[RMDB]
RNA sequence: GGGAACGACUCGAGUAGAGUCGAAAAAACAAACAUCACAUCGCAUAGCAAAGAGUCAAAAAAAUAGAGAGCUUUGCGAGACCUACCAAGGGUGAAGAGAUACCAUCCAAGGAGCUGAAGAGAAAUCGAGAGCUCACGGCGUUCGCGCCGUGAGCAACGUCUUGUAUUACUUCGGUAAUACAAGACGAAAAGAAACAACAACAACAAC
Reactivity to 2A3 in 0.01 (KOAc 150mM, MgCl2 10mM, bicine 150mM(pH8.5), 24C), signal-to-noise 2, nucleotides 027 to 156: a010a020c140a040a100a000c030a070u100c040a010c010a080u020c000g000c010a010u060a020g000c030a030a150a020g070a080g110u120c120a150a140a040a070a130a100a020u250a080g120a030g010a050g020c000u000u010u020g000c020g000a000g010a000c020c000u040a070c070c000a060a060g030g010g020u020g000a000a060g100a020g010a060u060a140c050c040a030u000c000c000a010a040g000g000a030g060c070u060g020a080a000g030a020g040a090a050a000u110c070g010a040g010a030g270c020u000c000a000c000g000g020c000g000u060u100c190g000c000g000c040c000g000u010g000a000g000c020a000a000
This 207-nucleotide RNA was probed chemically with 2A3. It was measured as part of the RMDB library M2RFPK. For 2A3 the reverse transcriptase was SuperScript II with manganese. Conditions: 150 mM KOAc, 10 mM MgCl2 and 150 mM bicine (pH 8.5), 24 C.